Notes
The record gives the reactivity of an RNA of 207 nucleotides to 2A3 and DMS. 2A3 adducts were read by reverse transcription with SuperScript II with manganese. DMS adducts were read by reverse transcription with MarathonRT. The data come from the RNA Mapping Database (RMDB), library RNAMAK. Conditions: 150 mM KOAc, 10 mM MgCl2 and 150 mM bicine (pH 8.5), 24 C.
RNA sequence: GGGAACGACUCGAGUAGAGUCGAAAAGCGUACUACGUCUUUUGACGGAUAGUGUCUGGGAGGUGUUUCCCAAAUAGGAAACACCGUUGAUCAGACAACUAUCCGAUAAGACGUAUCGCAAAACCAUUUAUAGUCAGUUCGCUGACUAUAAAUGGAAGUUACUAUUUGGAUUCGUCCAAAUAGUAACAAAAGAAACAACAACAACAAC
Reactivity to 2A3 in 0.01 (KOAc 150mM, MgCl2 10mM, bicine 150mM(pH8.5), 24C), signal-to-noise 6, nucleotides 027 to 156: g010c010g040u100a090c070u010a000c010g010u010c000u050u090u070u150g250a100c030g000g000a000u000a000g010u000g000u000c000u000g000g000g000a020g000g000u010g010u010u000u030c030c010c020a170a260a050u250a050g000g000a000a000a000c000a000c000c010g010u060u000g000a000u000c000a000g000a020c020a010a040c000u000a000u000c000c000g000a000u010a000a000g000a000c000g000u000a010u190c000g000c000a030a060a000a040c000c000a000u000u000u000a000u000a000g000u000c010a000g010u020u100c190g030c160u000g000a000c000u000a000u000a000a000a000u000g000g000a010a000
Reactivity to DMS in 0.01 (KOAc 150mM, MgCl2 10mM, bicine 150mM(pH8.5), 24C), signal-to-noise 2, nucleotides 027 to 156: g030c030g050u000a050c090u000a010c010g020u000c000u000u000u000u000g030a300c090g020g010a030u000a010g050u010g000u000c000u000g000g000g010a040g050g040u000g010u000u000u000c000c000c010a040a140a200u000a050g000g010a040a010a030c000a000c000c000g000u010u010g000a040u000c000a010g000a000c000a020a060c000u000a020u010c000c000g030a060u000a010a020g010a030c000g000u000a010u000c020g000c020a070a050a120a150c000c000a020u000u000u000a010u000a000g010u000c000a020g020u000u010c300g020c020u000g020a020c000u010a000u010a000a000a010u000g020g010a000a070